Chemical mapping of a 177-nucleotide RNA with DMS and 2A3.
DMS adducts were read by reverse transcription with MarathonRT.
DMS (dimethyl sulfate) methylates the pairing face of unpaired adenines and cytosines.
Source: RMDB library OK1LIB, as collected in RNAgym.
Conditions: 150 mM KOAc, 10 mM MgCl2 and 150 mM bicine (pH 8.5), 24 C.
RNA sequence: GGGAACGACUCGAGUAGAGUCGAAAAGGUCCGGUUGCCAUUUCUACGGAAAGUCUGUAUUCAGCGCAUCCGCGGGGUGAUCUAACAAACAAUCUCACACGUACACGCACUGAUGGAUCGGUAGAUACGAUCUCACUAUUUUCGAAUAGUGAGAUCGAAAAGAAACAACAACAACAAC
Reactivity to DMS in 0.01 (KOAc 150mM, MgCl2 10mM, bicine 150mM(pH8.5), 24C), signal-to-noise 5, nucleotides 027 to 126: g000g000u010c010c020g020g000u000u010g010c030c030a090u010u010u010c020u030a070c050g010g000a050a060a080g010u010c030u000g010u020a120u010u010c040a060g000c030g000c060a090u020c120c060g000c030g010g000g010g010u010g000a040u010c090u000a090a090c190a060a080a100c220a060a060u010c070u000c030a040c050a080c070g010u000a070c140a130c100g000c040a020c040u020g000a050u020g000g000a070u000c030g010g010u010a040g010a060u020a150
Reactivity to 2A3 in 0.01 (KOAc 150mM, MgCl2 10mM, bicine 150mM(pH8.5), 24C), signal-to-noise 7, nucleotides 027 to 126: g040g020u040c020c010g020g030u050u080g020c030c020a070u060u090u040c030u050a050c050g050g060a070a030a030g060u010c030u060g060u030a150u080u190c030a030g010c010g030c060a030u030c030c010g000c020g020g060g010g020u050g030a060u040c040u160a060a070c040a090a140a020c020a060a110u050c040u010c020a050c000a000c050g030u080a020c050a010c060g070c010a030c050u080g010a050u080g010g020a030u030c030g030g040u050a030g030a050u080a080